Chemical mapping of a 207-nucleotide RNA with 2A3 and DMS.
The reactions ran in a buffer of 150 mM KOAc, 10 mM MgCl2 and 150 mM bicine (pH 8.5), at 24 C.
For DMS the reverse transcriptase was MarathonRT.

RNA sequence: GGGAACGACUCGAGUAGAGUCGAAAAAGAACAUGUAAGCCAGAAAUUAGAACAGUCACUGUCAUCAAGACUGUGACUAAAGCAGCCAUUAUUCCAAAGAAGCAAGAACAAGCAACCACAGCUAUACCAUCUGACUCACCACAGCUGUUAGAAUGUACGGCUUAUUAUCUUUCGAGAUAAUAAGCCGAAAAGAAACAACAACAACAAC
Reactivity to 2A3 in 0.01 (KOAc 150mM, MgCl2 10mM, bicine 150mM(pH8.5), 24C), signal-to-noise 2, nucleotides 027 to 156: a010g050a060a010c020a020u140g010u190a060a000g010c000c010a020g040a020a120a080u120u100a130g040a130a070c060a010g000u010c000a000c010u020g000u020c010a110u160c140a230a050g020a000c000u000g020u000g000a000c000u010a040a030a000g000c000a010g000c020c010a040u070u070a050u140u060c040c040a080a040a060g070a050a000g070c060a010a010g010a050a020c040a060a000g040c020a070a010c050c040a050c020a030g010c020u040a050u030a200c000c020a010u010c010u050g030a040c020u020c060a050c000c060a040c000a040g040c040u010g020u080u020a070g080a080a100u130g050u150a020
Reactivity to DMS in 0.01 (KOAc 150mM, MgCl2 10mM, bicine 150mM(pH8.5), 24C), signal-to-noise 1, nucleotides 027 to 156: a060g040a000a000c130a030u010g010u000a060a130g000c030c040a120g000a150a060a140u000u000a200g030a130a100c190a060g020u000c000a020c030u000g030u000c000a300u020c300a060a130g010a000c000u000g000u000g000a050c010u000a060a070a090g060c150a150g000c000c030a160u000u000a130u000u000c000c060a000a070a220g010a030a110g030c040a040a100g140a080a020c020a020a030g090c000a200a060c020c000a090c050a020g000c060u000a060u010a070c010c000a120u040c000u010g000a080c010u010c020a130c010c040a060c260a050g010c000u000g040u000u000a050g040a050a070u000g050u000a150